RNA sequence: GGGAACGACUCGAGUAGAGUCGAAAACAUGAUGGUGUCUGAGAAAGUAAAUAAGCAUCCAAUUACAAUAAUUUUGUGGAUUCUUCCUUCACAAAACUAAAGUCCCAUAAUCACAUCCAGUUAAACGCCACGUCGCAGGGUUCGCCCUGCGACGUGGAAAAGAAACAACAACAACAAC
Reactivity to 2A3 in 0.01 (KOAc 150mM, MgCl2 10mM, bicine 150mM(pH8.5), 24C), signal-to-noise 1, nucleotides 027 to 126: c110a060u230g000a110u090g000g000u000g030u000c000u030g020a000g090a090a020a000g120u150a000a000a140u080a290a000g030c000a000u000c000c000a000a170u170u300a140c200a050a000u240a110a110u250u120u150u060g010u000g000g000a050u130u080c000u040u160c030c000u000u000c040a060c030a000a180a280a200c110u090a090a060a110g000u030c000c000c000a000u060a110a030u090c000a000c000a060u060c050c000a060g050u090u140a000a000a000c000g000
Structure probing data (2A3) for a 177-nucleotide construct. Conditions: 150 mM KOAc, 10 mM MgCl2 and 150 mM bicine (pH 8.5), 24 C. 2A3 adducts were read by reverse transcription with SuperScript II with manganese. Source: RMDB library OK1LIB, as collected in RNAgym. Values cover nucleotides 27 to 126.